[RMDB]
RNA sequence: GGGAACGACUCGAGUAGAGUCGAAAAAUCGCUUGAGUCCAGGAGUUCUGGGCUGUAGUGCGCUAUGCCGAUCGGGUGUCCGCACUAAGUUCGGCAUCAAUAUGGUGACCUCCCGGGAGCGGGGGACCACCAGGUUGCCUAAGGAGGGGUGAACCGGCUACUCCUGUAGCUUCGGCUACAGGAGUAGAAAAGAAACAACAACAACAAC
Reactivity to 2A3 in 0.01 (KOAc 150mM, MgCl2 10mM, bicine 150mM(pH8.5), 24C), signal-to-noise 2, nucleotides 027 to 156: a020u040c000g000c010u030u070g120a000g010u000c010c010a020g060g080a210g120u290u100c000u020g010g020g040c020u000g040u000a040g000u030g030c040g020c070u060a030u060g000c010c010g080a100u070c100g070g010g000u050g020u010c090c180g090c040a000c010u040a090a070g020u040u020c020g010g000c010a010u000c000a020a170u100a160u170g000g000u020g030a050c000c000u060c040c010c020g020g070g020a180g070c090g000g000g000g000g000a050c080c000a010c000c010a000g010g010u000u040g010c000c000u020a070a020g040g030a040g010g020g010g040u040g040a010a000c000c000g010g020